[RMDB]
The data come from the RNA Mapping Database (RMDB), library OK1LIB. Chemical mapping of a 177-nucleotide RNA with DMS. Conditions: 150 mM KOAc, 10 mM MgCl2 and 150 mM bicine (pH 8.5), 24 C.
RNA sequence: GGGAACGACUCGAGUAGAGUCGAAAAAUAUGUUGAUCCAUUGACUGGAUACACCUUUGACGAGUCACCAAUGACAGAUAUGAGACUAGUGGCGGAAAAAGUGAUGGAAGGUAGGCAAUAUGAGCUAACAAAGGGAGCGUUUCGACGCUCCCUUUGUAAAAGAAACAACAACAACAAC
Reactivity to DMS in 0.01 (KOAc 150mM, MgCl2 10mM, bicine 150mM(pH8.5), 24C), signal-to-noise 1, nucleotides 027 to 126: a100u000a140u000g000u000u000g000a090u040c000c000a090u000u000g040a140c070u020g010g050a020u040a120c120a070c040c010u000u050u000g000a140c060g000a070g000u000c010a080c030c050a130a030u060g000a130c080a080g010a240u040a090u000g000a000g000a040c020u000a090g010u000g000g000c030g000g000a040a010a060a020a110g000u060g000a040u000g000g000a020a040g000g000u000a010g000g000c040a010a050u000a100u000g030a040g030c020u020a120